[RMDB]
RNA sequence: GGGAACGACUCGAGUAGAGUCGAAAAGGAUUUCAAGCUGCAUAAAUCGUUCAAUAAUGGCCCAGGUGCCGUGUUAUCCUUCGAAACGGGGUCCUUCGAACAUUCAAAGAGACUGGUCAGUUCCAAAUGGUAAUAUAUGGUUCGCCAUAUAUUACCAAAAAGAAACAACAACAACAAC
Reactivity to DMS in 0.01 (KOAc 150mM, MgCl2 10mM, bicine 150mM(pH8.5), 24C), signal-to-noise 7, nucleotides 027 to 126: g010g010a070u000u000u000c070a110a100g010c050u000g000c060a060u010a060a040a090u010c080g010u000u010c080a080a080u010a070a080u000g010g010c020c020c070a090g000g020u000g020c080c050g010u010g010u000u000a050u010c030c030u000u000c070g010a050a110a070c110g020g010g010g000u000c030c050u000u000c060g000a040a110c150a080u010u000c080a040a080a100g000a110g000a040c030u000g010g010u000c040a070g010u000u000c010c020a060a070a160
Reactivity to 2A3 in 0.01 (KOAc 150mM, MgCl2 10mM, bicine 150mM(pH8.5), 24C), signal-to-noise 3, nucleotides 027 to 126: g020g010a040u030u050u040c040a080a030g070c040u030g020c070a040u070a090a100a060u100c050g030u080u040c080a100a060u090a230a070u150g030g000c040c030c020a040g090g060u070g000c000c010g010u010g020u020u050a080u080c020c000u030u040c070g080a050a010a060c050g010g000g000g070u010c000c000u010u030c020g020a050a020c010a100u070u060c020a060a050a040g050a030g000a030c000u010g000g030u040c030a050g020u050u050c010c000a010a060a060
Description: Structure probing data (DMS and 2A3) for a 177-nucleotide construct. It was measured as part of the RMDB library OK2TRN. For DMS the reverse transcriptase was MarathonRT. The 2A3 profile rests on 3,629 reads.